[RMDB]
RNA sequence: GGGAACGACUCGAGUAGAGUCGAAAAGGUGCUUUCCGAGCUCGGUGAGAUGGAGGUCGUGCGGGUCGCCAUGCAUCCGGGAUCCGUGCAGGGCUUCGGACAGCUCGGCCGUGAUGGUGUACCGACCAGUCGUAAAUAUCUUCGGAUAUUUACGACUAAAAGAAACAACAACAACAAC
Reactivity to 2A3 in 0.01 (KOAc 150mM, MgCl2 10mM, bicine 150mM(pH8.5), 24C), signal-to-noise 7, nucleotides 027 to 126: g010g010u030g010c020u150u170u020c000c010g020a030g010c030u070c110g100g030u170g100a220g020a100u150g070g010a030g050g270u030c030g020u030g010c010g000g000g020u020c050g140c250c010a040u180g050c030a120u070c060c040g010g000g010a010u000c000c010g010u020g020c030a130g030g040g040c000u030u030c020g020g050a040c020a010g000c010u020c000g030g000c000c000g060u110g030a080u180g010g050u040g010u030a020c000c000g020a030c000c020
Reactivity to DMS in 0.01 (KOAc 150mM, MgCl2 10mM, bicine 150mM(pH8.5), 24C), signal-to-noise 8, nucleotides 027 to 126: g010g020u000g010c020u000u010u000c010c010g010a060g020c020u010c130g000g020u010g010a140g010a220u010g010g000a050g000g010u000c020g020u000g010c040g010g010g010u000c010g020c020c020a100u000g010c140a080u010c140c110g010g000g010a020u000c010c010g020u000g010c030a080g030g000g000c010u000u010c020g010g000a180c130a050g000c000u000c030g010g020c050c020g000u010g000a090u010g010g010u000g010u000a050c020c020g000a140c040c030

Chemical mapping of a 177-nucleotide RNA with 2A3 and DMS. For DMS the reverse transcriptase was MarathonRT. The data come from the RNA Mapping Database (RMDB), library OK2TRN. As a SHAPE reagent, 2A3 marks flexible, mostly unpaired nucleotides at the ribose 2'-OH. DMS (dimethyl sulfate) methylates the pairing face of unpaired adenines and cytosines.